[RMDB]
RNA sequence: GGGAACGACUCGAGUAGAGUCGAAAACAAUUGCGCCACCAAAGUCAUUAAUGGCGUAAAAAUGCACUUUUGCAGAAUUCGCUUUGCCAUUAAGGCCAUUGACUUUCAUGACCUCAUCACUAAAUGACGACUGGGUAUCAUUCGUGAUACCCAGUCGAAAAGAAACAACAACAACAAC
Reactivity to DMS in 0.01 (KOAc 150mM, MgCl2 10mM, bicine 150mM(pH8.5), 24C), signal-to-noise 1, nucleotides 027 to 126: c070a120a060u030u000g000c150g000c030c000a030c110c080a050a040a080g000u010c090a120u000u000a120a070u000g000g000c000g030u000a010a030a080a270a050u000g000c080a030c300u060u000u030u000g000c000a080g010a130a180u020u020c130g050c010u010u010u010g010c020c040a020u000u000a180a050g000g020c010c160a010u000u000g000a020c050u000u000u000c100a070u000g000a060c030c000u000c050a030u000c070a030c130u000a080a040a150u000g000a010
Reactivity to 2A3 in 0.01 (KOAc 150mM, MgCl2 10mM, bicine 150mM(pH8.5), 24C), signal-to-noise 1, nucleotides 027 to 126: c020a040a000u080u100g010c050g000c010c010a000c000c010a100a010a000g070u080c040a000u010u150a040a070u050g010g050c010g000u050a070a070a000a000a000u050g000c030a030c080u060u170u260u120g000c020a020g050a070a150u160u060c010g000c110u110u050u070g000c010c000a040u010u090a060a060g030g040c000c000a030u000u080g010a010c010u000u040u070c050a100u090g040a050c010c050u020c020a060u020c010a010c030u100a160a080a040u090g060a040

Chemical mapping of a 177-nucleotide RNA with DMS and 2A3. It was measured as part of the RMDB library OK2TST. The RNA was probed in 150 mM KOAc, 10 mM MgCl2 and 150 mM bicine (pH 8.5) at 24 C. DMS adducts were read by reverse transcription with MarathonRT. For 2A3 the reverse transcriptase was SuperScript II with manganese. For 2A3, 1,052 sequencing reads were counted.